RNA sequence: GGGAACGACUCGAGUAGAGUCGAAAAAGCGCUCAUACUACGGUAUGCGCGCAAUCAGAAAUCGGGAAUGAUGUUCUCCCCUGGGAUUCCAAAACCGCUGUUUCGCUGAUGACGUCUGCUUUUUUAAUCACCACCGUUUGGUUCGCCAAACGGUGAACAGAAUAGAUACCUUCGGGUAUCUAUUCUGAAAAGAAACAACAACAACAAC
Reactivity to DMS in 0.01 (KOAc 150mM, MgCl2 10mM, bicine 150mM(pH8.5), 24C), signal-to-noise 1, nucleotides 027 to 156: a190g010c010g000c020u000c000a060u000a000c020u000a080c250g040g010u000a020u000g030c190g000c000g030c000a020a020u000c080a110g000a020a080a100u000c060g000g000g020a080a140u010g000a130u000g020u020u000c040u010c010c020c010c050u000g020g020g000a170u000u000c040c050a090a040a080a120c070c060g080c020u010g030u000u010u000c020g040c030u000g010a080u000g010a090c090g010u000c020u010g000c020u010u010u010u020u000u000a060a120u010c040a130c090c020a010c000c000g000u000u000u020g030g000u000u000c300g050c000c010a000a000a030c010g040g010u000g020a010a040
Reactivity to 2A3 in 0.01 (KOAc 150mM, MgCl2 10mM, bicine 150mM(pH8.5), 24C), signal-to-noise 3, nucleotides 027 to 156: a000g000c010g010c000u000c000a010u000a010c010u030a000c100g060g000u000a010u010g020c000g000c000g000c000a000a080u030c020a010g130a070a100a040u130c050g010g000g030a060a080u080g050a060u070g080u130u020c020u030c060c000c000c030u040g020g050g080a120u160u120c040c020a040a030a050a080c060c050g040c060u060g020u040u050u050c010g000c010u020g020a040u050g010a040c020g030u000c030u050g060c010u140u070u000u020u040u140a070a130u110c020a020c060c000a000c000c000g010u010u000u000g010g030u020u050c190g040c080c000a000a000a000c000g000g000u000g000a010a000
This 207-nucleotide RNA was probed chemically with DMS and 2A3. The DMS profile rests on 2,657 reads. DMS adducts were read by reverse transcription with MarathonRT. Conditions: 150 mM KOAc, 10 mM MgCl2 and 150 mM bicine (pH 8.5), 24 C. It was measured as part of the RMDB library M2RFPK.